[RMDB]
RNA sequence: GGGAACGACUCGAGUAGAGUCGAAAAGAUAUGGAGCCGCGAAACGUGACCCAGGCAAUGUGGUCGGAAACGACCAUGACCUGCACGGAGGCUCCUAAGUCAAAAGUUCGCUCUUCGGAGCGAACAACAACAGUAUGUCCUUCGGGACAUACUGUUGAAAAGAAACAACAACAACAAC
Reactivity to DMS in 0.01 (KOAc 150mM, MgCl2 10mM, bicine 150mM(pH8.5), 24C), signal-to-noise 3, nucleotides 027 to 126: g000a030u000a300u000g000g010a030g000c020c000g030c170g020a080a110a160c030g010u000g030a140c300c290c060a010g020g060c120a100a080u000g020u000g010g020u000c000g010g000a100a110a250c010g000a010c000c000a020u000g000a040c020c000u000g000c010a000c000g000g000a150g010g010c040u000c010c000u010a020a070g010u000c040a070a120a170a140g020u000u000c000g030c000u000c000u010u020c170g030g020a010g000c010g020a000a000c000a110a160
Reactivity to 2A3 in 0.01 (KOAc 150mM, MgCl2 10mM, bicine 150mM(pH8.5), 24C), signal-to-noise 2, nucleotides 027 to 126: g070a010u080a050u160g050g000a000g020c020c030g090c230g200a180a210a070c020g050u020g110a130c050c150c070a000g020g000c000a050a040u160g000u020g020g020u030c000g020g030a110a060a070c010g000a000c010c000a010u000g030a060c000c000u000g000c000a010c000g060g040a040g010g010c010u010c000c010u020a050a000g040u010c040a040a000a190a000g000u000u010c000g000c010u000c000u020u230c300g110g000a000g000c000g010a000a000c000a000a010